[RMDB]
RNA sequence: GGGAACGACUCGAGUAGAGUCGAAAAGACCGUUUGCUCAAUGGAAGCUAAACGCGGCACUCGUACAGCCGAUUGGUAACCAAGUGUAUAUAAGAGCAACGCGGGAGCAGCAACUACAAUCGGUUGAAGAGACAGAGCUGUUCGCAGCUUUGUCUCUAAAAGAAACAACAACAACAAC
Reactivity to DMS in 0.01 (KOAc 150mM, MgCl2 10mM, bicine 150mM(pH8.5), 24C), signal-to-noise 9, nucleotides 027 to 126: g010a130c020c000g010u010u000u000g020c010u000c000a160a150u020g000g010a080a290g000c020u010a020a050a100c180g010c020g000g000c020a120c090u000c160g010u020a140c170a080g010c000c010g000a080u010u000g000g010u000a060a300c060c020a040a100g010u030g010u010a100u040a080u040a110a120g000a030g010c010a020a040c170g010c070g000g000g010a090g000c040a070g000c070a060a070c090u010a080c110a040a050u010c060g010g010u000u000g010a140
Reactivity to 2A3 in 0.01 (KOAc 150mM, MgCl2 10mM, bicine 150mM(pH8.5), 24C), signal-to-noise 9, nucleotides 027 to 126: g060a010c010c000g000u010u010u010g000c000u010c020a070a120u100g040g010a040a010g000c010u020a040a060a050c110g000c010g070g000c000a040c040u100c060g120u170a070c030a030g000c000c000g020a020u000u030g030g020u040a030a020c020c010a030a050g070u030g110u080a050u010a020u020a240a090g020a010g010c010a010a020c080g010c010g030g010g020a040g010c010a000g010c010a060a040c020u170a060c080a100a120u100c070g040g000u020u020g040a070
This 177-nucleotide RNA was probed chemically with DMS and 2A3.
Reactivities are given for positions 27 through 126.
2A3 adducts were read by reverse transcription with SuperScript II with manganese.
The reactions ran in a buffer of 150 mM KOAc, 10 mM MgCl2 and 150 mM bicine (pH 8.5), at 24 C.
DMS adducts were read by reverse transcription with MarathonRT.